[RMDB]
RNA sequence: GGGAACGACUCGAGUAGAGUCGAAAACGCGAGGGUAGGGUUGGCACACUGCCAAGAUCACCAAGCAUGUGCGCGGCCAUCUUGCUUCCAAACUCAUUAGCAUACCCCGCCCAUUAUUCCAUUCUCAUUUGCAUACCCACCGUUGCACAUGCCGCCAGUAUGGUCUCUGGUUCGCCAGAGACCAUACAAAAGAAACAACAACAACAAC
Reactivity to 2A3 in 0.01 (KOAc 150mM, MgCl2 10mM, bicine 150mM(pH8.5), 24C), signal-to-noise 1, nucleotides 027 to 156: c110g060c030g090a170g030g040g000u040a060g050g020g070u090u020g060g020c030a000c030a040c240u210g000c020c030a100a010g010a190u110c000a030c060c060a110a000g000c000a000u000g020u000g000c000g030c000g000g080c000c090a100u090c010u080u070g000c010u150u080c040c060a090a100a110c070u160c010a060u040u230a080g000c000a030u030a010c000c000c000c000g000c000c000c010a020u100u120a100u130u110c050c010a000u200u020c020u010c060a130u050u060u130g090c040a040u030a160c000c000c000a030c000c050g030u030u300g010c000a000c000a010u030g020c000c030g040c080c000a010